Chemical mapping of a 177-nucleotide RNA with DMS and 2A3.

RNA sequence: GGGAACGACUCGAGUAGAGUCGAAAAGAUAUGGAAGCCAUACAGGACAUGCUGUAAGUGUCGGAAACGACAUAUCAGCAACAGCCUGUGGCUUCCUAAGUCAAAGUGCGUGGUUCGCCACGCACAACAUUAUCGAGGGCUUCGGCCCUCGAUAAUGAAAAGAAACAACAACAACAAC
Reactivity to DMS in 0.01 (KOAc 150mM, MgCl2 10mM, bicine 150mM(pH8.5), 24C), signal-to-noise 2, nucleotides 027 to 126: g000a040u000a220u000g000g000a030a000g000c000c010a260u010a120c050a000g000g010a040c130a300u000g050c010u020g000u000a120a210g050u000g020u000c030g030g000a030a020a120c000g010a030c000a030u000a210u000c000a010g030c010a070a090c280a090g000c000c000u000g000u000g000g000c000u000u000c000c000u040a010a060g020u000c010a080a090a170g010u000g020c000g020u000g000g010u000u030c220g000c000c000a000c000g000c000a000c000a050a110
Reactivity to 2A3 in 0.01 (KOAc 150mM, MgCl2 10mM, bicine 150mM(pH8.5), 24C), signal-to-noise 2, nucleotides 027 to 126: g000a030u030a010u160g000g000a000a000g000c000c030a070u110a300c030a040g040g000a070c180a260u300g080c000u040g000u300a300a300g120u070g000u060c020g010g020a030a020a010c020g010a000c000a020u100a040u070c000a000g000c000a080a050c060a030g030c000c000u010g010u010g020g000c000u010u000c000c000u000a000a010g010u020c090a150a100a060g000u020g000c030g010u000g000g120u070u090c300g050c100c000a010c030g000c000a010c000a010a000

About this RNA: High 2A3 reactivity points to a flexible backbone, as in loops and unpaired stretches. For 2A3 the reverse transcriptase was SuperScript II with manganese. Values are in units of 0.01, from 0 to 300, in steps of 10. It was measured as part of the RMDB library TTRDES. The DMS profile rests on 1,299 reads. DMS (dimethyl sulfate) methylates the pairing face of unpaired adenines and cytosines.